[RMDB]
Conditions: 150 mM KOAc, 10 mM MgCl2 and 150 mM bicine (pH 8.5), 24 C. Structure probing data (DMS and 2A3) for a 177-nucleotide construct. For 2A3 the reverse transcriptase was SuperScript II with manganese.
RNA sequence: GGGAACGACUCGAGUAGAGUCGAAAAGGGAUAUUGUUCGCAAUAUCCCAAAAGGAACCAGGCACGGUGCCUGAGAACUGAAUAGCUUAUACGGAAGCUAAAAAACCACGGAGUUCGCUCCGUGGAACCAUAAAGUGGCGUUCGCGCCACUUUAUGGAAAAGAAACAACAACAACAAC
Reactivity to DMS in 0.01 (KOAc 150mM, MgCl2 10mM, bicine 150mM(pH8.5), 24C), signal-to-noise 1, nucleotides 027 to 126: g000g010g010a000u000a000u030u000g030u010u020c150g040c000a000a000u000a000u020c000c000c000a000a050a070a050g000g000a070a240c050c040a050g000g030c020a150c300g000g000u010g000c000c000u000g000a030g020a140a200c050u000g000a020a140u000a040g020c020u000u050a150u030a150c300g000g000a010a040g000c000u000a000a070a110a160a070a070c000c000a000c000g020g010a020g000u000u000c220g000c010u020c000c000g020u010g000g000a010a100
Reactivity to 2A3 in 0.01 (KOAc 150mM, MgCl2 10mM, bicine 150mM(pH8.5), 24C), signal-to-noise 1, nucleotides 027 to 126: g020g020g000a000u010a010u000u010g030u030u040c130g040c060a000a010u010a000u000c000c000c000a010a000a010a010g000g010a000a020c000c000a000g030g000c020a020c200g300g080u270g020c000c020u020g010a040g010a150a010c040u060g020a020a060u030a120g000c010u040u000a050u040a170c050g100g120a020a010g030c040u060a080a230a040a000a000a000c020c030a000c000g000g030a020g000u090u120c150g070c170u030c000c000g010u000g010g000a000a040